[RMDB]
Description
Structure probing data (DMS and 2A3) for a 207-nucleotide construct. Values cover nucleotides 27 to 156. 2A3 adducts were read by reverse transcription with SuperScript II with manganese.
RNA sequence: GGGAACGACUCGAGUAGAGUCGAAAACAGAGCUGAUGGGCCAUGUACCUAUCCAAAAUGAGAUCCCAUCUUGCACACUGUGCUAAUUUGAGAUUCUCAUGCCUCCUACUUGGAGAGACCUGGACUACUAACUGUAUGACGUUCGCGUCAUACAGAACUCAACCCUAUUCUUCGGAAUAGGGUUGAGAAAAGAAACAACAACAACAAC
Reactivity to DMS in 0.01 (KOAc 150mM, MgCl2 10mM, bicine 150mM(pH8.5), 24C), signal-to-noise 1, nucleotides 027 to 156: c040a090g000a120g020c060u010g000a140u000g020g060g050c040c080a200u000g050u000a100c000c000u020a050u000c020c070a020a030a100a140u000g000a040g000a050u010c020c000c000a020u000c050u010u000g040c020a030c010a220c110u060g010u010g030c020u010a030a010u000u000u000g000a020g030a020u000u000c010u000c000a020u000g020c040c000u000c010c010u000a100c130u010u000g010g000a070g000a100g000a020c020c050u020g010g000a080c040u000a130c130u000a080a220c020u000g020u000a000u000g010a000c010g060u010u010c280g030c000g000u000c000a010u000a000c000a020g010a030a080
Reactivity to 2A3 in 0.01 (KOAc 150mM, MgCl2 10mM, bicine 150mM(pH8.5), 24C), signal-to-noise 5, nucleotides 027 to 156: c010a020g040a000g060c100u110g040a030u060g010g020g000c050c100a160u190g040u140a070c000c010u020a040u050c030c040a080a110a020a030u030g000a030g000a050u010c000c000c000a000u000c020u030u030g000c010a020c040a050c120u280g010u010g010c070u190a040a070u010u040u050g020a020g010a030u300u060c000u000c020a000u060g040c000c000u020c000c010u090a260c090u130u230g020g000a010g000a000g020a030c000c010u030g040g040a050c050u060a020c010u060a270a090c000u030g000u010a000u000g010a010c000g010u020u020c180g040c010g120u000c010a000u000a000c000a000g000a010a010